RNA sequence: GGGAACGACUCGAGUAGAGUCGAAAACUUCUGGUGUUCGCACCAGAAGAAAUCCGUACUCGACGCGCCAGUCGAGAGAUAUUGUGGCUGUUCCCAGCCGGAAAACCGCUCCCUUCGGGGAGCGGAAGCGCAAUAAUAGGUUCGCCUAUUAUUGCGCAAAAGAAACAACAACAACAAC
Reactivity to 2A3 in 0.01 (KOAc 150mM, MgCl2 10mM, bicine 150mM(pH8.5), 24C), signal-to-noise 1, nucleotides 027 to 126: c000u000u020c000u010g060g000u000g050u080u080c190g040c120a000c020c020a010g000a000a000g000a010a040a000u010c020c000g010u040a070c000u010c010g010a000c000g060c040g060c160c100a050g000u020c000g000a020g000a000g000a010u020a060u270u300g190u300g030g000c010u000g040u030u030c000c000c000a000g000c000c020g010g010a050a150a020a070c030c000g000c010u000c000c010c010u040u030c290g020g010g000g000a000g000c000g030g000a000a000
Reactivity to DMS in 0.01 (KOAc 150mM, MgCl2 10mM, bicine 150mM(pH8.5), 24C), signal-to-noise 2, nucleotides 027 to 126: c010u000u000c000u060g000g000u000g000u000u020c200g020c000a000c000c010a000g000a000a010g000a060a120a070u000c080c060g040u000a120c000u000c000g020a000c030g010c240g000c290c170a100g000u000c000g000a040g020a050g000a070u000a070u010u000g030u000g010g000c000u000g000u000u000c000c000c000a300g010c030c020g000g000a090a050a150a170c010c000g000c000u000c000c000c000u000u000c130g030g010g000g010a020g000c000g000g000a000a010

Structure probing data (2A3 and DMS) for a 177-nucleotide construct.
For DMS the reverse transcriptase was MarathonRT.
For DMS, 1,099 sequencing reads were counted.
The RNA was probed in 150 mM KOAc, 10 mM MgCl2 and 150 mM bicine (pH 8.5) at 24 C.
For 2A3 the reverse transcriptase was SuperScript II with manganese.